Background
An RNA of 170 nucleotides, treated with DMS and 2A3 and read out base by base. For 2A3, 8,199 sequencing reads were counted.
RNA sequence: GGGAACGACUCGAGUAGAGUCGAAAAUAGUUUUGCCAAGAUGUUAUUUAUGCUUCCACUAGCUUACUUUAGUGAUUCAAAACUCGGCACCACAGAGGUUAAAGUGAGUGCUUUGAAAACAGCCGGCUUAUCAUGCACUUCGGUGCAUGAAAAAGAAACAACAACAACAAC
Reactivity to DMS in 0.01 (KOAc 150mM, MgCl2 10mM, bicine 150mM(pH8.5), 24C), signal-to-noise 4, nucleotides 027 to 129: u000a000g010u000u000u000u000g010c000c000a080a070g010a110u040g030u050u020a090u030u070u020a060u030g010c000u030u030c070c020a060c040u030a070g040c060u100u030a060c120u040u000u040a000g000u000g000a090u040u020c100a040a030a100a130c020u030c120g000g040c070a000c000c010a000c030a070g030a100g030g010u000u000a020a080a140g020u000g010a050g000u030g010c080u020u010u000g030a030a020a070a050c100a030g020c030c030g040g010c020u060u060a000
Reactivity to 2A3 in 0.01 (KOAc 150mM, MgCl2 10mM, bicine 150mM(pH8.5), 24C), signal-to-noise 5, nucleotides 027 to 129: u090a000g090u030u000u000u110g030c010c010a010a050g020a050u050g020u070u040a110u110u150u050a140u170g060c010u040u020c040c000a020c050u020a010g010c040u150u130a070c010u050u170u070a030g020u040g090a080u080u040c010a000a000a020a100c100u020c070g020g000c010a020c000c000a020c000a030g120a090g060g150u140u160a090a080a010g010u020g090a080g000u010g000c000u090u020u090g040a000a010a000a000c010a030g000c010c040g000g000c000u040u020a060